[RMDB]
RNA sequence: GGGAACGACUCGAGUAGAGUCGAAAACAUAAGACGCGCGUGGCUUUUGCCACAGCCGGAUACUUCGGCCAUGCGUCUGCCGUGGGGCCAAGGGCCCCGGCUUAUCAUCGAAAGCGAACACGGCGUAGUGUAUAAGACUCUUCGGAGUCUUAUACACAAAAGAAACAACAACAACAAC
Reactivity to DMS in 0.01 (KOAc 150mM, MgCl2 10mM, bicine 150mM(pH8.5), 24C), signal-to-noise 4, nucleotides 027 to 126: c050a110u040a160a030g000a020c000g020c000g020c280g000u000g000g010c010u010u030u050u030g020c000c000a000c020a110g000c020c000g000g000a140u050a060c190u030u020c030g000g030c000c040a030u030g000c030g020u000c010u000g010c010c010g020u000g000g010g000g000c010c000a170a150g000g010g020c020c020c000c070g000g010c000u000u000a090u020c110a140u040c190g000a070a020a020g010c000g010a090a190c130a040c000g010g020c010g030u020a120
Reactivity to 2A3 in 0.01 (KOAc 150mM, MgCl2 10mM, bicine 150mM(pH8.5), 24C), signal-to-noise 6, nucleotides 027 to 126: c030a030u230a080a060g000a000c000g010c000g020c020g010u010g000g010c030u040u110u300u300g010c000c010a010c000a000g000c010c000g020g020a070u170a280c130u090u100c010g000g000c010c010a050u190g000c000g000u000c000u000g000c000c010g020u050g000g000g010g000c020c030a180a140g170g090g010c010c000c000c000g000g000c000u040u070a190u120c090a070u090c080g110a140a030a000g020c040g030a060a030c020a010c070g000g010c040g020u070a030